[RMDB]
RNA sequence: GGGAACGACUCGAGUAGAGUCGAAAAUCUUGUCCACCUCUCACUUGGUUGGUGGCAGUGUCUGUUGUGAGAAACACGUGCGAUGAAAAGCCAAGAAGGGUAUUAGCCAUGCUUCCUCGAGCAGAGGGAGUAAGUCAUGGUUCGCCAUGACUUACUCAAAAGAAACAACAACAACAAC
Reactivity to DMS in 0.01 (KOAc 150mM, MgCl2 10mM, bicine 150mM(pH8.5), 24C), signal-to-noise 4, nucleotides 027 to 126: u010c060u000u010g010u010c020c020a130c030c010u020c060u000c120a160c130u010u000g000g010u000u000g010g030u000g000g020c040a040g020u000g020u000c070u000g010u000u010g020u000g020a140g010a140a060a050c060a030c070g020u000g010c030g010a090u020g000a050a080a100a140g000c020c020a030a090g010a100a090g000g010g010u000a030u010u010a090g000c040c040a060u000g010c020u000u000c020c000u000c030g010a100g020c140a090g010a040g010g010
Reactivity to 2A3 in 0.01 (KOAc 150mM, MgCl2 10mM, bicine 150mM(pH8.5), 24C), signal-to-noise 2, nucleotides 027 to 126: u040c010u000u110g050u050c010c030a000c020c000u050c020u020c010a190c060u060u120g020g000u020u050g090g000u080g030g000c000a040g030u030g000u000c110u090g070u180u150g070u070g120a080g130a120a080a000c040a030c050g060u100g000c030g050a050u070g150a110a070a050a030g000c000c020a000a050g050a060a040g080g010g000u120a140u230u110a050g030c010c030a030u060g080c040u050u030c010c000u000c010g020a030g140c160a020g080a030g000g070